[RMDB]
RNA sequence: GGGAACGACUCGAGUAGAGUCGAAAAUAAACCUCUCUUUUGCCAUCGUGAUAAUUUUUCACUUUCCACACUCAGUGAAAGAAAAAAAUUUUAACUUCGUUACAAGCGAUGAGUAUAGAUCGGCAAGCGACGAUGCACGGUUCGCCGUGCAUCGUCGAAAAGAAACAACAACAACAAC
Reactivity to 2A3 in 0.01 (KOAc 150mM, MgCl2 10mM, bicine 150mM(pH8.5), 24C), signal-to-noise 2, nucleotides 027 to 126: u220a100a010a000c000c000u000c020u040c000u000u000u200u160g030c000c040a060u000c000g000u000g170a090u190a300a000u000u000u000u030u030c060a040c090u030u000u130c100c070a070c070a090c090u190c100a020g000u090g180a020a000a010g180a150a160a000a030a000a000a000u100u020u000u000a020a100c050u010u100c000g160u080u100a040c060a210a000g000c000g000a000u000g030a000g030u040a050u090a140g080a080u000c010g000g100c000a000a110g000

The record gives the reactivity of an RNA of 177 nucleotides to 2A3. Reactivities are given for positions 27 through 126. The reactions ran in a buffer of 150 mM KOAc, 10 mM MgCl2 and 150 mM bicine (pH 8.5), at 24 C.